[RMDB]
RNA sequence: GGGAACGACUCGAGUAGAGUCGAAAAACACAAGAAAUUCAAACAUAAAAGCAUAGUGACGGAGGACGGUACCGUGGUGUUGGUGCAAUUCCCUCGUAAGCGUGCCCGUGAGGGAAACGUUGACGUCCUAGCGACAACAAUUCGUUGUUGUCGCUAGAAAAGAAACAACAACAACAAC
Reactivity to DMS in 0.01 (KOAc 150mM, MgCl2 10mM, bicine 150mM(pH8.5), 24C), signal-to-noise 4, nucleotides 027 to 126: a110c040a070c130a100a110g020a090a040a060u010u030c130a100a090a080c110a080u020a080a070a050a130g020c060a070u010a050g010u010g020a050c060g020g000a060g010g000a060c120g000g000u020a060c080c020g010u000g000g020u010g020u000u000g010g000u000g000c130a070a130u010u000c000c000c000u020c000g010u000a030a050g000c030g000u010g010c000c020c000g000u040g010a080g000g000g010a000a000a050c070g020u000u000g030a120c110g020u010c060
Reactivity to 2A3 in 0.01 (KOAc 150mM, MgCl2 10mM, bicine 150mM(pH8.5), 24C), signal-to-noise 3, nucleotides 027 to 126: a000c030a000c070a110a040g170a060a100a040u230u170c150a110a160a060c030a110u300a180a080a010a020g050c060a070u120a130g110u060g080a000c030g010g000a010g070g110a040c030g010g000u090a040c010c020g020u050g020g000u060g030u030u160g020g000u010g010c000a040a060u030u000c010c000c000u010c000g050u050a000a080g020c000g030u040g010c070c000c000g040u070g060a040g030g020g000a010a050a010c000g000u000u050g010a020c010g020u040c000
Chemical mapping of a 177-nucleotide RNA with DMS and 2A3. The 2A3 profile rests on 2,208 reads. The reactions ran in a buffer of 150 mM KOAc, 10 mM MgCl2 and 150 mM bicine (pH 8.5), at 24 C. For DMS the reverse transcriptase was MarathonRT. The data come from the RNA Mapping Database (RMDB), library OK1LIB.